The record gives the reactivity of an RNA of 177 nucleotides to 2A3 and DMS.
RNA sequence: GGGAACGACUCGAGUAGAGUCGAAAAGGAACUUUGGCGAUGGGGCCGGGAGGGCCAAGCGUAUCAUCGAUCUGUCGGUCGGUAUGGUAAGUGACGCAAGCUGUAUGGUAAGUGACGCAAGCUGAAACUAUCUAAAAGGUUUCGACCUUUUAGAUAGAAAAGAAACAACAACAACAAC
Reactivity to 2A3 in 0.01 (KOAc 150mM, MgCl2 10mM, bicine 150mM(pH8.5), 24C), signal-to-noise 9, nucleotides 027 to 126: g050g010a060a030c040u080u080u070g030g000c030g070a080u090g010g000g030g030c050c020g010g030g020a100g010g040g000c010c010a040a030g020c010g020u050a040u080c020a020u040c020g030a030u020c030u120g190u160c060g020g000u010c010g000g030u090a060u070g020g020u070a080a060g040u030g060a020c040g000c060a020a030g000c020u030g040u150a070u070g050g030u100a090a080g040u030g050a010c050g000c060a030a020g000c010u010g010a050a020a020
Reactivity to DMS in 0.01 (KOAc 150mM, MgCl2 10mM, bicine 150mM(pH8.5), 24C), signal-to-noise 9, nucleotides 027 to 126: g010g000a100a070c090u010u010u010g010g010c040g010a090u010g010g000g010g020c040c040g000g010g000a090g010g010g000c040c040a060a100g010c050g010u000a040u010c050a040u010c040g000a040u010c030u010g010u010c110g010g020u000c030g010g000u010a030u010g010g000u000a040a090g000u000g010a110c100g010c070a060a110g010c030u000g000u010a060u010g010g000u000a040a100g010u000g010a060c070g010c080a040a100g010c050u000g000a110a080a160

In probing experiments dimethyl sulfate is read out at A N1 and C N3, which are open when not base-paired.